[RMDB]
RNA sequence: GGGAACGACUCGAGUAGAGUCGAAAAGAUAUGGAAACGGGAUGGCCGUUAGUAGGGCGAUAAGAAUGCACUCGGAAACGAGUGUCAUUCUUUUGACGCCUGAAACGGCCAUCCCGUUUCCUAAGUCCAAAUCUAGCAUCUUCGGAUGCUAGAUUUGAAAAGAAACAACAACAACAAC
Reactivity to DMS in 0.01 (KOAc 150mM, MgCl2 10mM, bicine 150mM(pH8.5), 24C), signal-to-noise 2, nucleotides 027 to 126: g000a110u000a300u000g010g000a000a010a010c000g000g010g020a030u000g000g010c000c020g000u000u010a080g000u000a230g000g010g010c000g020a190u000a020a000g000a020a010u000g000c030a010c000u010c000g010g010a090a080a300c000g030a000g000u000g010u020c010a000u000u000c000u000u000u000u010g020a230c120g010c010c000u000g000a050a120a010c000g020g010c000c000a010u000c000c000c000g000u000u000u000c000c010u000a010a110g000u010c050
The data come from the RNA Mapping Database (RMDB), library TTRINS. This 177-nucleotide RNA was probed chemically with DMS. Reactivities are given for positions 27 through 126. The RNA was probed in 150 mM KOAc, 10 mM MgCl2 and 150 mM bicine (pH 8.5) at 24 C. For DMS, 2,474 sequencing reads were counted.